[RMDB]
RNA sequence: GGGAACGACUCGAGUAGAGUCGAAAAUUCUCGAUGGGCAACUGGACUUCCGCGGACAACUGGCGGUGCGCAGCCACCUGCUCAUGUGCGGGCAUUGCCGGCGCUUCAUCCGCCAGAUGCGCCUGACUAUUUCUCCUUUCUUCGGAAAGGAGAAAUAAAAAGAAACAACAACAACAAC
Reactivity to DMS in 0.01 (KOAc 150mM, MgCl2 10mM, bicine 150mM(pH8.5), 24C), signal-to-noise 6, nucleotides 027 to 126: u010u010c010u010c000g010a120u020g020g000g000c080a080a100c070u010g000g000a120c070u000u000c020c040g030c060g000g000a150c100a070a090c030u010g000g000c010g020g000u010g000c300g020c010a170g010c130c280a200c060c030u000g010c010u000c270a100u030g010u010g010c040g000g000g010c280a080u030u030g000c090c050g000g000c020g010c020u040u030c100a100u010c010c010g000c000c000a030g010a020u000g000c130g020c030c010u000g000a160c110
Reactivity to 2A3 in 0.01 (KOAc 150mM, MgCl2 10mM, bicine 150mM(pH8.5), 24C), signal-to-noise 6, nucleotides 027 to 126: u020u000c010u000c020g070a160u110g010g010g020c030a080a040c060u060g020g030a040c010u110u010c050c020g030c010g040g020a050c020a070a050c080u010g000g020c010g030g020u020g000c040g000c010a010g020c020c010a020c000c020u020g000c000u040c100a140u180g080u110g110c040g010g010g000c050a090u010u170g040c050c030g090g000c010g000c000u150u140c030a100u030c020c000g000c000c000a010g000a020u020g020c060g020c020c020u020g040a050c020
Conditions: 150 mM KOAc, 10 mM MgCl2 and 150 mM bicine (pH 8.5), 24 C. Chemical mapping of a 177-nucleotide RNA with DMS and 2A3. DMS adducts were read by reverse transcription with MarathonRT. High 2A3 reactivity points to a flexible backbone, as in loops and unpaired stretches. For 2A3 the reverse transcriptase was SuperScript II with manganese.